This 177-nucleotide RNA was probed chemically with 2A3 and DMS. The RNA was probed in 150 mM KOAc, 10 mM MgCl2 and 150 mM bicine (pH 8.5) at 24 C. It was measured as part of the RMDB library OK2TRN. The DMS profile rests on 3,279 reads.
RNA sequence: GGGAACGACUCGAGUAGAGUCGAAAAGGAGACGAUGUCAGCCUCGGCCAGCAGCUCGUCAAGGCUGUGGCCGGCGUCGUCGCGGUAAGGAUCGUGCGCGAUGACCCGCAGGCCCAGCCCGGACAGCACUCACACGUUCAUUCGUGAACGUGUGAGUAAAAGAAACAACAACAACAAC
Reactivity to 2A3 in 0.01 (KOAc 150mM, MgCl2 10mM, bicine 150mM(pH8.5), 24C), signal-to-noise 3, nucleotides 027 to 126: g110g030a090g020a060c070g110a110u160g050u090c060a020g040c000c030u050c050g050g000c030c020a030g060c030a010g010c060u090c110g030u040c030a000a010g000g000c010u030g070u250g060g000c000c000g000g010c030g000u000c010g000u000c000g000c010g020g040u220a200a170g160g050a180u190c070g120u160g160c030g010c000g000a020u010g030a060c010c000c100g070c040a040g010g030c020c000c000a000g030c060c000c000g020g010a010c030a000g030c010
Reactivity to DMS in 0.01 (KOAc 150mM, MgCl2 10mM, bicine 150mM(pH8.5), 24C), signal-to-noise 3, nucleotides 027 to 126: g000g000a120g020a060c050g000a090u000g000u010c050a120g010c010c010u000c050g020g010c030c020a140g010c110a130g030c030u020c150g010u000c040a140a070g000g000c000u000g000u010g010g020c000c000g000g000c300g000u000c000g010u000c000g000c000g010g010u010a080a110g000g000a060u000c110g020u000g010c010g020c000g000a020u000g000a030c030c130c100g000c020a060g010g000c000c000c000a010g010c000c010c250g000g010a010c030a070g010c050